[RMDB]
RNA sequence: GGGAACGACUCGAGUAGAGUCGAAAACCUCUUCUUCCUCCCUGCUGAGGUUCUUUCCUCCCGCGGAGAGUUGCUUCCUCUUGUUCUCGAGGGCCUUCCUUCUGCGGUGAUCCUCCCUCUCCUUGUCACAGCAAAGUCUUCGGACUUUGCAAAAGAAACAACAACAACAAC
Reactivity to 2A3 in 0.01 (KOAc 150mM, MgCl2 10mM, bicine 150mM(pH8.5), 24C), signal-to-noise 5, nucleotides 027 to 129: c000c000u010c010u060u020c010u090u060c010c000u030c000c000c000u030g010c050u030g020a010g050g000u020u050c000u020u040u040c020c010u040c010c030c010g020c000g020g020a040g000a030g030u030u070g020c050u120u080c020c000u020c000u070u150g100u160u070c070u030c070g010a050g010g000g010c000c000u040u010c010c000u040u050c010u030g020c010g040g000u040g020a010u000c000c010u020c000c000c000u010c000u010c000c000u030u070g060u080c020a010c030a060
Reactivity to DMS in 0.01 (KOAc 150mM, MgCl2 10mM, bicine 150mM(pH8.5), 24C), signal-to-noise 6, nucleotides 027 to 129: c060c000u020c050u000u000c030u000u030c020c030u010c010c040c060u000g020c060u040g000a000g040g060u040u000c000u000u000u000c030c000u000c020c000c010g060c120g050g020a070g020a090g030u030u030g020c020u000u000c040c020u030c060u050u010g040u050u030c040u000c090g030a130g010g030g060c300c040u000u030c020c020u020u020c030u040g020c000g030g040u020g020a090u010c030c020u000c010c040c020u020c030u010c020c030u020u090g030u000c070a100c180a140

This 170-nucleotide RNA was probed chemically with 2A3 and DMS. Values cover nucleotides 27 to 129. The RNA was probed in 150 mM KOAc, 10 mM MgCl2 and 150 mM bicine (pH 8.5) at 24 C. For DMS the reverse transcriptase was MarathonRT. The DMS profile rests on 26,796 reads. The 2A3 profile rests on 19,270 reads.